[RMDB]
RNA sequence: GGGAACGACUCGAGUAGAGUCGAAAAGAUAUGGAACGUACCUAGCAACAGCUAUGACCUCGGAAACGAGGUAUAGACAUGCUAGCGUACGUUCCUAAGUCAAAGUAGGUAUCUUCGGAUACCUACACCAACUGUCCUGCUUCGGCAGGACAGUUGGAAAAGAAACAACAACAACAAC
Reactivity to DMS in 0.01 (KOAc 150mM, MgCl2 10mM, bicine 150mM(pH8.5), 24C), signal-to-noise 1, nucleotides 027 to 126: g040a070u000a300u000g000g000a030a000c000g020u000a000c010c000u000a020g000c010a030a140c300a270g000c000u000a010u000g000a000c000c000u000c000g050g010a150a070a260c040g040a050g010g000u020a020u000a000g000a000c230a300u000g000c010u000a010g040c300g040u000a000c000g010u010u000c000c000u040a010a050g000u010c080a030a100a000g000u020a000g000g020u000a000u000c030u000u000c230g000g000a000u000a050c000c000u000a020c010a050
Reactivity to 2A3 in 0.01 (KOAc 150mM, MgCl2 10mM, bicine 150mM(pH8.5), 24C), signal-to-noise 1, nucleotides 027 to 126: g040a050u110a030u190g010g000a010a020c000g000u000a010c000c000u000a000g050c000a010a190c030a160g120c030u030a020u210g300a250c020c000u000c000g030g010a130a040a000c000g040a000g070g000u000a010u000a000g000a040c070a060u160g000c010u000a000g010c020g040u000a010c000g000u010u020c000c000u000a000a020g020u000c000a060a060a050g010u000a000g020g000u040a000u040c010u050u190c300g050g000a010u000a000c030c000u000a010c000a010